[RMDB]
The record gives the reactivity of an RNA of 177 nucleotides to 2A3 and DMS.

RNA sequence: GGGAACGACUCGAGUAGAGUCGAAAAGGAUUAAAAUAUCAGGAGAUAACAGUGAAAAUUGAGAGAGUUGGCCGCUGUGGUAGAGGCACCCACCUAUGACGUGCUUAUUUUAAUUACGACUUUGAGACAGCAUAGAAUAGUUCGCUAUUCUAUGCUGAAAAGAAACAACAACAACAAC
Reactivity to 2A3 in 0.01 (KOAc 150mM, MgCl2 10mM, bicine 150mM(pH8.5), 24C), signal-to-noise 7, nucleotides 027 to 126: g070g000a030u050u060a020a040a040a040u160a050u100c090a050g080g050a050g020a070u140a130a070c040a020g060u040g130a070a050a060a130u150u210g010a070g010a010g010a010g110u050u120g090g010c040c000g000c020u030g020u050g070g040u060a040g010a040g060g020c000a030c010c000c010a020c000c010u100a090u140g030a010c050g040u030g000c000u070u030a060u060u100u030u040a050a100u060u060a060c080g040a050c100u060u060u150g050a080g020a040
Reactivity to DMS in 0.01 (KOAc 150mM, MgCl2 10mM, bicine 150mM(pH8.5), 24C), signal-to-noise 6, nucleotides 027 to 126: g010g010a070u010u020a030a030a080a060u010a060u010c060a090g000g000a110g010a100u010a050a090c060a070g010u020g000a060a050a090a110u010u010g020a100g020a090g020a080g010u000u010g010g010c050c060g020c030u020g020u010g010g020u010a050g010a080g000g020c050a060c010c010c020a070c040c040u010a060u020g010a060c090g030u000g000c050u010u000a040u010u010u010u020a020a030u010u010a070c100g010a070c050u010u010u030g010a160g000a210
It was measured as part of the RMDB library OK1LIB. Conditions: 150 mM KOAc, 10 mM MgCl2 and 150 mM bicine (pH 8.5), 24 C. For DMS the reverse transcriptase was MarathonRT.